[RMDB]
RNA sequence: GGGAACGACUCGAGUAGAGUCGAAAAAUAAGCUAAGGAAGACAGCUGAAAUAUCGCAAAUAUUUUCCUGGGUAACUGAAGUGGAGAGUCCCAAACUGUUUGAAACCCAGGACUUAGGUUUAUUUGAAGCAGAUCCUAUAGAGUGCACUGCGGUCUAUAUCCUUUUAUGAUUCGUCAUAAAAGGAUAAAAAGAAACAACAACAACAAC
Reactivity to 2A3 in 0.01 (KOAc 150mM, MgCl2 10mM, bicine 150mM(pH8.5), 24C), signal-to-noise 2, nucleotides 027 to 156: a000u030a000a010g010c000u010a020a010g020g030a080a040g110a040c060a010g050c000u030g040a040a030a000u110a080u120c050g000c020a050a060a100u120a110u060u150u050u040c000c000u010g000g000g000u010a020a020c030u050g050a070a030g060u070g060g030a110g010a010g160u080c010c000c000a010a100a060c040u060g090u180u220u080g090a070a030a010c000c000c000a000g000g000a000c010u010u020a000g020g130u170u020u030a040u010u070u080g010a020a000g000c020a020g020a070u050c000c000u050a030u040a080g080a040g040u060g000c040a000c070u060g040c060g010g000u000c010u070a050
Reactivity to DMS in 0.01 (KOAc 150mM, MgCl2 10mM, bicine 150mM(pH8.5), 24C), signal-to-noise 3, nucleotides 027 to 156: a090u000a060a060g010c010u000a090a050g000g020a140a060g000a090c050a060g020c000u000g000a080a110a100u000a080u010c130g010c090a100a080a150u000a040u000u010u000u010c030c000u000g020g000g010u000a080a210c040u010g010a050a080g020u010g000g020a160g010a190g040u000c040c010c020a040a120a070c010u000g020u020u020u000g010a080a120a090c020c000c000a040g020g010a020c110u000u000a030g020g000u010u000u000a030u020u000u000g010a140a100g020c070a110g020a060u000c010c020u010a150u000a140g010a130g030u000g010c050a090c160u000g020c000g000g030u000c010u000a230